[RMDB]
RNA sequence: GGGAACGACUCGAGUAGAGUCGAAAAGAUAUGGACCACAGGAGCUUUUGACGACGGGGUGUCGGAAACGACACCGACGUCGAUAAGCUCCGUGGUCCUAAGUCAAAAUCCCCCGUUCGCGGGGGAAGUGAGUAUCCUAGUUCGCUAGGAUACUCACAAAAGAAACAACAACAACAAC
Reactivity to 2A3 in 0.01 (KOAc 150mM, MgCl2 10mM, bicine 150mM(pH8.5), 24C), signal-to-noise 2, nucleotides 027 to 126: g010a010u050a010u110g020g000a000c030c060a010c210a300g080g000a020g000c050u200u260u300u300g300a230c090g020a000c000g000g080g000g010u010g010u000c010g020g000a060a020a000c020g010a000c000a000c040c010g000a010c000g000u010c000g020a000u010a010a020g000c000u000c000c000g010u000g010g000u000c000c000u010a000a000g000u000c010a000a040a020a300u020c000c000c000c000c000g020u040u040c280g020c020g100g000g000g020g010a020a020
Reactivity to DMS in 0.01 (KOAc 150mM, MgCl2 10mM, bicine 150mM(pH8.5), 24C), signal-to-noise 2, nucleotides 027 to 126: g000a000u010a300u000g010g010a000c000c010a000c030a200g060g000a020g020c000u000u000u000u010g000a230c100g030a030c020g000g010g020g030u000g000u000c000g040g000a050a060a080c010g000a010c000a010c000c000g010a050c010g020u000c010g000a060u000a010a020g030c000u000c000c010g050u010g010g020u000c000c000u000a000a060g020u000c020a120a130a170a250u000c000c000c000c000c000g020u000u000c190g030c020g050g020g000g000g010a000a010
Structure probing data (2A3 and DMS) for a 177-nucleotide construct.
For 2A3, 3,742 sequencing reads were counted.
The reactions ran in a buffer of 150 mM KOAc, 10 mM MgCl2 and 150 mM bicine (pH 8.5), at 24 C.
2A3 adducts were read by reverse transcription with SuperScript II with manganese.